[RMDB]
RNA sequence: GGGAACGACUCGAGUAGAGUCGAAAAGCAAAAGAUUAUCCAGGUGUAGCGGUGAAAUUCGUAGAGAUCUGGUGGAUAAUGAACCGCUGGCGAAGGCGAAAGAUAACCGCUGAAAAGAAGAAUUGAAGUCUCUCAUAUUGUUCGCAAUAUGAGAGACAAAAGAAACAACAACAACAAC
Reactivity to DMS in 0.01 (KOAc 150mM, MgCl2 10mM, bicine 150mM(pH8.5), 24C), signal-to-noise 2, nucleotides 027 to 126: g000c080a170a020a080a130g020a080u010u010a100u000c010c020a150g000g010u010g030u000a060g010c010g020g070u000g000a070a120a060u000u000c010g000u000a040g000a110g010a140u000c020u000g010g010u000g000g000a080u000a080a090u000g020a140a110c060c020g010c000u000g010g010c030g020a160a100g000g000c040g010a030a070a060g000a030u000a080a030c050c020g030c010u000g020a060a030a070a120g010a080a040g000a080a090u000u000g010a100a190
Structure probing data (DMS) for a 177-nucleotide construct.
Source: RMDB library M2PK90, as collected in RNAgym.
The reactions ran in a buffer of 150 mM KOAc, 10 mM MgCl2 and 150 mM bicine (pH 8.5), at 24 C.
Reactivities are rounded to 0.1 and cut off at 0 and 3.